[RMDB]
RNA sequence: GGGAACGACUCGAGUAGAGUCGAAAAAACAGCCUGCUUGUAGAGGUUGCAAAGGACCUGCUGCCUGUCUUGAGGAUGCUGCCUACAAGCGCACAUGACCACUUGUUGAGGCUCGCGAAGGGUGAGGCCAUAUGUGCCUUUUCGAAGGCACAUAUGGAAAAGAAACAACAACAACAAC
Reactivity to 2A3 in 0.01 (KOAc 150mM, MgCl2 10mM, bicine 150mM(pH8.5), 24C), signal-to-noise 3, nucleotides 027 to 126: a000a000c040a000g040c020c010u060g000c020u060u040g030u050a050g020a050g110g040u040u050g000c030a120a010a070g090g040a040c000c040u030g020c030u020g000c020c000u070g040u040c010u060u070g040a060g070g000a030u070g020c030u050g020c020c020u050a030c010a020a010g010c020g000c030a040c010a130u070g050a080c000c010a040c080u090u080g050u070u090g100a030g050g000c020u030c040g020c030g070a060a040g070g020g020u050g020a080g060g020
Reactivity to DMS in 0.01 (KOAc 150mM, MgCl2 10mM, bicine 150mM(pH8.5), 24C), signal-to-noise 4, nucleotides 027 to 126: a070a050c080a060g010c020c020u000g020c050u010u010g000u000a040g020a180g000g010u000u020g020c050a050a110a100g030g010a100c050c030u010g020c040u000g000c030c040u000g010u000c030u000u010g000a100g000g010a130u000g000c040u000g020c060c010u000a050c060a000a040g000c040g020c100a070c060a080u000g000a110c040c030a060c080u000u000g000u010u000g010a090g020g010c030u000c080g000c050g000a090a100g020g000g010u000g010a100g010g020
The record gives the reactivity of an RNA of 177 nucleotides to 2A3 and DMS. The reactions ran in a buffer of 150 mM KOAc, 10 mM MgCl2 and 150 mM bicine (pH 8.5), at 24 C. 2A3 adducts were read by reverse transcription with SuperScript II with manganese. It was measured as part of the RMDB library OK2TST. For DMS the reverse transcriptase was MarathonRT. The 2A3 profile rests on 3,343 reads.